[RMDB]
RNA sequence: GGGAACGACUCGAGUAGAGUCGAAAAGAUAUGGAUACUAAGACAGAAGGGAGAGAUGUUUCGGAAACGAAACCUCUCUCGAGGAUCUUUCGAGUAUCCUAAGUCAAAACGUCUGUUCGCAGACGAACAUCCUUGAACUGUUCGCAGUUCAAGGAUGAAAAGAAACAACAACAACAAC
Reactivity to 2A3 in 0.01 (KOAc 150mM, MgCl2 10mM, bicine 150mM(pH8.5), 24C), signal-to-noise 3, nucleotides 027 to 126: g030a020u050a010u110g010g000a010u000a000c020u040a090a110g010a030c090a080g290a300a140g300g050g000a000g010a000g010a050u200g030u010u020u040c010g000g000a020a040a040c000g000a010a000a020c000c020u000c010u000c010u000c000g010a010g000g020a090u000c000u010u080u170c160g050a010g000u000a000u010c010c000u000a130a000g070u010c050a030a000a100a140c030g030u000c020u020g080u090u080c300g050c150a000g000a030c020g010a030a010
Reactivity to DMS in 0.01 (KOAc 150mM, MgCl2 10mM, bicine 150mM(pH8.5), 24C), signal-to-noise 4, nucleotides 027 to 126: g010a020u010a300u000g010g010a030u000a010c010u010a080a110g020a010c090a070g030a120a240g000g010g010a030g010a010g010a100u010g010u000u000u000c000g000g000a090a110a200c000g010a010a000a000c000c030u000c000u000c000u010c000g010a090g010g010a150u000c000u010u010u010c130g010a050g000u000a010u010c010c000u000a030a110g010u000c050a070a050a130a150c030g000u000c010u000g030u010u020c260g020c000a010g000a020c010g020a090a260
Overview:
Source: RMDB library TTRDES, as collected in RNAgym. An RNA of 177 nucleotides, treated with 2A3 and DMS and read out base by base. The reactions ran in a buffer of 150 mM KOAc, 10 mM MgCl2 and 150 mM bicine (pH 8.5), at 24 C. For 2A3, 5,465 sequencing reads were counted.